[RMDB]
RNA sequence: GGGAACGACUCGAGUAGAGUCGAAAAGCAGGAGUGUUAUACUUCUUAUGAAGAUCUACAAGAUAACGACUUUGUUGAAAACAGAAAAUAUCCACAAUACGAUACUCGGUAUUACUAUUUAGUUUACGCUAGAUUAUUUAUAACGCGCACACGAGAGCGUGUAUGCCCUAUUCGUAGGGCAUACACGAAAAGAAACAACAACAACAAC
Reactivity to DMS in 0.01 (KOAc 150mM, MgCl2 10mM, bicine 150mM(pH8.5), 24C), signal-to-noise 2, nucleotides 027 to 156: g040c060a070g000g000a070g030u000g010u020u010a050u010a020c010u000u000c020u000u000a190u030g010a140a050g000a100u000c040u000a260c050a070a190g000a120u000a110a090c070g010a100c070u000u030u000g020u020u030g010a090a100a070a200c050a160g020a110a050a060a110u000a090u020c030c060a070c080a060a130u000a090c030g030a090u000a040c020u000c010g000g000u000a030u000u000a110c050u000a110u000u000u000a040g000u000u000u010a030c110g030c040u000a030g000a210u000u000a050u010u000u010a070u000a100a100c050g010c030g020c040a050c030a050c070g000a050g040a070g010
Reactivity to 2A3 in 0.01 (KOAc 150mM, MgCl2 10mM, bicine 150mM(pH8.5), 24C), signal-to-noise 3, nucleotides 027 to 156: g070c020a010g020g020a030g030u060g090u240u050a110u010a130c030u050u040c050u090u070a140u230g040a010a030g020a060u010c040u090a050c070a130a050g040a140u070a100a020c030g080a050c070u180u060u090g040u050u080g040a050a060a050a000c030a020g130a010a100a010a010u080a060u040c020c010a020c020a100a040u110a020c030g020a010u050a080c030u010c030g000g030u040a010u080u040a060c050u010a040u000u180u020a010g000u040u120u160a050c060g000c020u000a030g030a060u020u020a060u040u240u030a120u050a120a000c020g010c030g010c000a010c020a010c100g040a050g020a010g140
Chemical mapping of a 207-nucleotide RNA with DMS and 2A3. Values cover nucleotides 27 to 156. DMS adducts were read by reverse transcription with MarathonRT. Conditions: 150 mM KOAc, 10 mM MgCl2 and 150 mM bicine (pH 8.5), 24 C. The data come from the RNA Mapping Database (RMDB), library OK3TST.